[RMDB]
RNA sequence: GGGAACGACUCGAGUAGAGUCGAAAAAUGAUUCAAAGGGCAUUCACUGAAAUCUUGCUUGAAGGAGAUUCAGAAGGCAAGCCUCACCUAUUCCAAAAUACUAUCUACACAUUACGUGAAGAGACCAAUCCAUAGGUGGGUUCGCCCACCUAUGGAUAAAAGAAACAACAACAACAAC
Reactivity to 2A3 in 0.01 (KOAc 150mM, MgCl2 10mM, bicine 150mM(pH8.5), 24C), signal-to-noise 4, nucleotides 027 to 126: a030u080g040a030u100u100c090a030a120a050g010g000g000c040a070u090u110c010a010c050u000g030a020a040a120u030c000u000u100g220c070u100u230g150a140a070g120g000a040g030a080u060u050c010a010g050a140a010g140g020c070a060a060g040c010c000u060c030a040c000c010u040a090u170u160c020c000a110a000a000a000u200a080c120u130a060u030c020u050a010c010a000c010a080u130u300a110c090g010u030g040a040a000g000a030g040a090c070c010a020
Reactivity to DMS in 0.01 (KOAc 150mM, MgCl2 10mM, bicine 150mM(pH8.5), 24C), signal-to-noise 2, nucleotides 027 to 126: a070u040g010a110u000u070c100a040a100a100g000g010g000c000a070u010u020c160a280c020u000g000a040a040a030u010c000u020u040g000c050u000u030g000a050a030g040g000a070g000a040u000u000c070a000g020a270a000g020g010c130a060a060g000c060c050u010c060a080c000c000u000a010u020u000c060c070a160a110a110a030u080a020c160u040a020u000c010u000a230c020a050c060a240u010u130a070c110g000u000g000a170a000g000a000g030a170c170c140a080
This 177-nucleotide RNA was probed chemically with 2A3 and DMS. For DMS, 1,830 sequencing reads were counted. Conditions: 150 mM KOAc, 10 mM MgCl2 and 150 mM bicine (pH 8.5), 24 C. The 2A3 profile rests on 2,489 reads.